[RMDB]
RNA sequence: GGGAACGACUCGAGUAGAGUCGAAAAGAUAUGGAAAGUUUCAGGGAGAUUGUCGGAAACGACAAGAUCAUCGAUCUGAGCUUUCCUAAGUCAAACCAAUCGAGAUGGUUCGCCAUCUCGAUUGGAACAUUCACUGCUAGUUCGCUAGCAGUGAAUGAAAAGAAACAACAACAACAAC
Reactivity to 2A3 in 0.01 (KOAc 150mM, MgCl2 10mM, bicine 150mM(pH8.5), 24C), signal-to-noise 5, nucleotides 027 to 126: g010a000u050a010u130g000g030a020a010a010g020u180u300u270c010a010g060g020g000a050g010a050u020u030g010u010c010g000g020a050a040a040c010g010a000c010a000a020g070a130u150c060a040u180c070g080a080u040c010u000g000a000g000c000u000u000u000c000c000u000a020a010g010u010c020a010a030a150c000c000a000a010u000c000g000a000g000a010u010g050g050u100u120c300g070c110c000a000u000c000u000c000g000a000u000u000g000g000a000a010
Reactivity to DMS in 0.01 (KOAc 150mM, MgCl2 10mM, bicine 150mM(pH8.5), 24C), signal-to-noise 5, nucleotides 027 to 126: g000a020u000a280u010g000g000a010a030a010g010u000u010u000c010a030g010g010g000a270g000a110u000u000g000u000c000g020g000a080a060a140c010g010a020c000a010a040g010a100u000c160a140u010c100g000a290u010c000u000g000a020g010c010u000u000u010c000c000u000a010a070g000u000c020a090a110a190c000c010a010a010u000c000g000a010g010a010u000g000g000u000u000c220g010c000c000a010u000c000u000c000g000a000u000u000g000g000a050a090